[RMDB]
The record gives the reactivity of an RNA of 177 nucleotides to DMS.
Source: RMDB library TTRINS, as collected in RNAgym.
Conditions: 150 mM KOAc, 10 mM MgCl2 and 150 mM bicine (pH 8.5), 24 C.
RNA sequence: GGGAACGACUCGAGUAGAGUCGAAAAGAUAUGGAUCGCGGUAACAAACUCUCACAAGGGAGCUGAUAUUCGGAAACGAAUAAUAGCAUCGAUCUUGUGAGAGUUUGUUACCGUCGAUCCUAAGUCAUCUUUUGAUAGGGUUCGCCCUAUCAAAAGAAAAAGAAACAACAACAACAAC
Reactivity to DMS in 0.01 (KOAc 150mM, MgCl2 10mM, bicine 150mM(pH8.5), 24C), signal-to-noise 1, nucleotides 027 to 126: g010a040u020a300u010g000g000a000u000c000g020c000g000g000u000a020a000c040a000a010a010c000u000c000u010c010a020c010a020a010g010g000g000a050g020c020u010g010a130u000a000u000u000c010g010g000a110a150a240c000g010a010a020u000a020a120u000a040g030c010a300u000c250g000a050u010c000u000u010g020u010g020a020g030a000g010u000u000u000g010u000u000a000c010c000g010u020c010g010a010u000c000c000u000a000a160g010u000c050a150